[RMDB]
RNA sequence: GGGAACGACUCGAGUAGAGUCGAAAACGGACGCCCUGCGCGGCAUGAGCCCCGAUCAGGUCGAGGCAUUCCUGAACCGGAACAUGUAAGGGAGCUACCCCAUGACCGCAAGCAAAACCACCAUGCGUGCUCAUUCGAUAUUCGUAUCGAAUGAGCAAAAAGAAACAACAACAACAAC
Reactivity to DMS in 0.01 (KOAc 150mM, MgCl2 10mM, bicine 150mM(pH8.5), 24C), signal-to-noise 3, nucleotides 027 to 126: c160g030g000a220c090g000c060c040c040u000g000c100g000c060g010g010c000a020u010g040a200g020c040c030c030c020g000a090u020c070a040g000g000u000c020g000a300g030g010c040a110u000u000c040c030u010g010a150a110c060c010g000g010a080a030c060a040u010g010u000a090a250g000g010g000a090g020c060u000a140c110c040c080c040a080u010g000a070c020c010g040c060a140a080g000c060a030a030a070a170c060c030a060c050c060a070u000g000c130g000
Reactivity to 2A3 in 0.01 (KOAc 150mM, MgCl2 10mM, bicine 150mM(pH8.5), 24C), signal-to-noise 1, nucleotides 027 to 126: c020g030g040a010c020g030c000c030c010u090g050c030g000c000g020g000c010a040u080g000a020g020c000c030c000c000g000a100u160c020a020g010g080u020c030g070a060g090g000c030a070u160u060c030c000u040g000a030a020c050c000g020g000a030a050c030a040u100g000u110a090a060g020g030g000a080g030c050u110a110c050c000c000c000a010u060g100a190c020c000g000c030a030a010g020c050a030a110a050a050c030c060a020c000c040a080u160g000c000g100